The record gives the reactivity of an RNA of 177 nucleotides to DMS.
Reactivities are given for positions 27 through 126.
The reactions ran in a buffer of 150 mM KOAc, 10 mM MgCl2 and 150 mM bicine (pH 8.5), at 24 C.
High DMS reactivity at an A or C suggests that its Watson-Crick edge is free.
For DMS the reverse transcriptase was MarathonRT.

[RMDB]
RNA sequence: GGGAACGACUCGAGUAGAGUCGAAAAAUUUAUGACGUACCACGACCGGGACUGAGCGGUUUGUCGUGGAUUGGCUCAACGCACACGGCUGGCGGGGUGAGGGUACCGUGCUCCCGGGAUGAGAUGACGUAGCGUACUCAUUCGUGAGUACGCUACGAAAAGAAACAACAACAACAAC
Reactivity to DMS in 0.01 (KOAc 150mM, MgCl2 10mM, bicine 150mM(pH8.5), 24C), signal-to-noise 2, nucleotides 027 to 126: a070u010u020u020a090u010g000a100c080g020u000a090c020c010a130c060g000a120c000c100g000g000g010a070c140u000g020a060g010c030g020g000u000u010u010g000u000c070g040u000g010g010a080u010u000g010g020c040u000c130a040a110c160g030c080a010c090a040c060g000g000c000u000g040g010c100g000g010g010g010u000g020a090g000g000g000u000a000c070c010g020u000g000c120u010c020c020c030g010g000g010a050u020g000a070g010a140u000g030a140